[RMDB]
RNA sequence: GGGAACGACUCGAGUAGAGUCGAAAACAUGGACAGACGGUGUCUUGCCCUGAUGUCCGGUUUUUUCCGUCAGCGCAGUGCCCGGCUGUUCUGUUGCGGCGCGUCUCCCCACAUAGCGCGGGAUGAACACUGACUCGGAGUUCGCUCCGAGUCAGUGAAAAGAAACAACAACAACAAC
Reactivity to DMS in 0.01 (KOAc 150mM, MgCl2 10mM, bicine 150mM(pH8.5), 24C), signal-to-noise 2, nucleotides 027 to 126: c000a070u110g000g000a000c030a000g000a160c230g010g040u010g000u020c060u000u000g000c020c010c000u010g000a200u010g000u000c100c040g020g000u000u000u000u000u000u000c040c040g010u030c030a010g020c300g050c000a050g020u000g000c000c010c020g000g030c000u000g000u000u000c000u000g000u010u000g000c080g020g010c030g000c050g030u000c040u000c010c000c000c020a090c200a050u020a040g000c090g010c080g000g000g010a060u000g000a040a070
Reactivity to 2A3 in 0.01 (KOAc 150mM, MgCl2 10mM, bicine 150mM(pH8.5), 24C), signal-to-noise 2, nucleotides 027 to 126: c050a080u190g000g030a010c000a000g020a010c010g060g010u070g020u150c010u100u160g000c000c010c000u040g000a030u020g130u060c030c060g000g000u080u010u000u010u040u050c020c010g000u060c010a010g000c000g010c000a000g010u000g080c010c000c000g030g030c000u000g010u020u010c040u020g060u020u060g020c030g040g010c000g000c000g040u030c030u020c000c010c040c000a020c020a060u160a000g030c040g000c010g020g000g000a060u100g060a040a000
Annotation: This 177-nucleotide RNA was probed chemically with DMS and 2A3. The data come from the RNA Mapping Database (RMDB), library RFM100. Reactivities are given for positions 27 through 126. For 2A3 the reverse transcriptase was SuperScript II with manganese. The 2A3 profile rests on 1,207 reads. The reactions ran in a buffer of 150 mM KOAc, 10 mM MgCl2 and 150 mM bicine (pH 8.5), at 24 C.